[RMDB]
Notes: An RNA of 177 nucleotides, treated with 2A3 and DMS and read out base by base. Reactivities are rounded to 0.1 and cut off at 0 and 3. Values cover nucleotides 27 to 126. The 2A3 profile rests on 2,689 reads. DMS adducts were read by reverse transcription with MarathonRT.

RNA sequence: GGGAACGACUCGAGUAGAGUCGAAAAGAUAUGGAGCGUCUCAGGGAGAACAGUGUCGGAAACGACAUGGGUUCAUCGAUCUGAGGACGCUCCUAAGUCAAAACUCUGUGCCUUCGGGCACAGAGAAGUGUAAUCACUUCUUCGGAAGUGAUUACACAAAAGAAACAACAACAACAAC
Reactivity to 2A3 in 0.01 (KOAc 150mM, MgCl2 10mM, bicine 150mM(pH8.5), 24C), signal-to-noise 2, nucleotides 027 to 126: g020a010u050a010u210g000g000a000g010c000g010u000c010u000c030a030g020g060g000a300g000a050a010c040a070g010u010g000u000c010g030g000a100a040a040c030g050a000c040a020u050g240g250g110u020u000c050a150u300c140g130a150u010c000u010g020a120g020g110a020c010g000c010u000c000c000u000a000a020g000u000c000a000a060a000a160c020u000c000u000g000u010g000c010c000u050u100c300g100g000g020c000a000c020a000g000a000g010a010a000
Reactivity to DMS in 0.01 (KOAc 150mM, MgCl2 10mM, bicine 150mM(pH8.5), 24C), signal-to-noise 2, nucleotides 027 to 126: g000a040u000a300u000g000g000a020g030c000g000u010c000u010c000a020g020g000g000a100g030a010a030c000a300g010u000g000u020c010g000g000a100a050a260c000g010a000c000a000u010g000g040g020u000u010c020a170u000c220g010a080u010c030u000g000a150g000g010a050c000g000c000u020c000c010u000a010a130g000u010c030a090a150a090a160c020u000c000u000g020u000g000c010c000u000u030c300g010g010g020c000a000c000a010g000a000g000a000a090